[RMDB]
RNA sequence: GGGAACGACUCGAGUAGAGUCGAAAACGUGUGGUACGUCUGCUGCCAUCCGCGCGCUCCUCCGCUUCGAUGGUGAUCGCCUGUGCGGGGCAAAUAGCCUCGCAUAGCUUGCAAGCGAUGCAGCGCAACUAGGUAAUCCAUUCGUGGAUUACCUAGUAAAAGAAACAACAACAACAAC
Reactivity to 2A3 in 0.01 (KOAc 150mM, MgCl2 10mM, bicine 150mM(pH8.5), 24C), signal-to-noise 9, nucleotides 027 to 126: c030g030u060g010u030g060g040u080a040c050g070u050c130u130g040c030u020g020c030c000a030u060c060c020g040c000g000c000g000c030u030c010c010u060c070c020g020c020u060u070c060g080a100u120g050g090u100g070a090u090c030g020c030c010u010g000u000g000c000g000g000g010g000c000a040a180a200u200a100g000c000c000u000c000g000c000a000u000a000g000c010u020u100g070c040a050a020g010c000g010a020u050g020c060a010g010c020g000c020a020
Reactivity to DMS in 0.01 (KOAc 150mM, MgCl2 10mM, bicine 150mM(pH8.5), 24C), signal-to-noise 7, nucleotides 027 to 126: c070g000u020g010u000g000g010u000a040c060g010u020c040u030g000c060u000g010c010c020a050u010c070c050g000c150g010c040g010c030u000c050c020u000c090c030g000c000u000u010c090g010a050u010g000g020u020g010a060u020c040g010c140c000u010g030u000g010c000g010g000g000g000c010a090a130a100u050a180g010c000c010u000c000g000c010a000u000a010g000c110u030u010g000c130a080a080g000c030g000a060u010g000c090a060g000c060g010c090a140
Conditions: 150 mM KOAc, 10 mM MgCl2 and 150 mM bicine (pH 8.5), 24 C. The record gives the reactivity of an RNA of 177 nucleotides to 2A3 and DMS. For DMS the reverse transcriptase was MarathonRT. Values cover nucleotides 27 to 126. Source: RMDB library OK1LIB, as collected in RNAgym. For 2A3, 24,863 sequencing reads were counted. For DMS, 30,260 sequencing reads were counted. For 2A3 the reverse transcriptase was SuperScript II with manganese.